This 207-nucleotide RNA was probed chemically with 2A3.
RNA sequence: GGGAACGACUCGAGUAGAGUCGAAAAGGGGUUCAUCCACAUAAAACUUAUUUCACAGUAGCUGAAAAAGGGAGUUUUCCAGAUAUUAUCAUCUAUGAAUAUCCUUCUCUGAGACCAUACAGAGUCCUUCGAGAUGGGACUGAGAAGGGAUAUGCUAACGACUAAUGACGUUCGCGUCAUUAGUCGUAAAAGAAACAACAACAACAAC
Reactivity to 2A3 in 0.01 (KOAc 150mM, MgCl2 10mM, bicine 150mM(pH8.5), 24C), signal-to-noise 1, nucleotides 027 to 156: g000g000g000g030u030u040c020a070u090c030c000a010c000a140u130a040a110a000a030c050u170u140a120u090u190u020c070a050c060a120g180u260a050g000c030u030g020a000a000a000a040a140g080g000g020a050g000u000u030u060u000c030c010a010g090a060u090a050u090u110a060u090c050a000u000c100u200a160u120g070a090a010u050a050u040c000c050u050u000c000u000c000u050g060a020g080a140c020c020a010u090a090c030a060g100a050g080u120c050c070u150u050c000g060a100g010a140u030g030g000g040a070c050u040g000a020g000a030a000g090g000g000a000u010a000u070g000c030u040a000